[RMDB]
RNA sequence: GGGAACGACUCGAGUAGAGUCGAAAAUAAUAUGUGCACAUGAGUAUGUACCUGUAUGUACGUAUGUGUGUACAUGUAACAUCGUGGUACAUUUCUUAUGUCUAUCGGGGAAGUCUCUAAAUUUUCACGCUACCUAGGCGUUCGCGCCUAGGUAGCGAAAAGAAACAACAACAACAAC
Reactivity to 2A3 in 0.01 (KOAc 150mM, MgCl2 10mM, bicine 150mM(pH8.5), 24C), signal-to-noise 1, nucleotides 027 to 126: u240a000a000u030a000u110g000u010g000c110a000c000a000u000g000a000g000u000a010u030g060u000a000c000c050u200g190u300a100u290g030u000a080c000g000u000a040u010g000u000g000u000g000u000a000c000a000u000g000u000a060a170c040a130u080c010g060u140g030g100u070a030c010a070u070u060u170c050u110u180a000u100g070u000c000u010a030u050c060g000g000g150g000a070a000g020u020c000u000c000u000a000a000a250u170u090u040u050c030a000